[RMDB]
RNA sequence: GGGAACGACUCGAGUAGAGUCGAAAAUGCAGACCGGCGGCAUGUGCACCGACUGGCUUCAGUGGCUGACCCAUCGCGCCGGACGUUCGCGCACAUGGUGGGCACCUUCCGUGGGGGAACAGGUGCACCGUAUUAGCGUGUUCGCACGCUAAUACGGAAAAGAAACAACAACAACAAC
Reactivity to DMS in 0.01 (KOAc 150mM, MgCl2 10mM, bicine 150mM(pH8.5), 24C), signal-to-noise 4, nucleotides 027 to 126: u000g020c050a090g000a100c020c000g010g030c020g020g040c070a040u000g010u000g030c010a050c030c000g010a080c050u010g010g000c160u010u000c060a050g020u000g000g020c280u000g000a210c080c010c010a050u000c090g010c120g030c010c010g000g010a120c110g000u000u000c100g030c040g010c070a080c110a080u020g010g020u010g010g000g010c010a020c040c020u000u010c000c030g030u010g010g010g000g000g030a060a050c130a060g020g010u000g000c020a100
Reactivity to 2A3 in 0.01 (KOAc 150mM, MgCl2 10mM, bicine 150mM(pH8.5), 24C), signal-to-noise 3, nucleotides 027 to 126: u100g000c000a020g050a140c010c010g010g000c020g040g060c030a030u100g000u030g050c020a010c030c020g100a050c020u020g050g080c050u270u200c040a050g010u050g050g000c060u040g160a300c000c010c000a010u050c060g000c010g010c010c000g020g040a040c050g070u070u170c060g020c010g000c070a020c010a080u120g020g030u010g020g070g020c020a010c000c000u030u030c030c020g050u140g050g030g030g000g020a010a040c030a050g000g000u020g000c000a020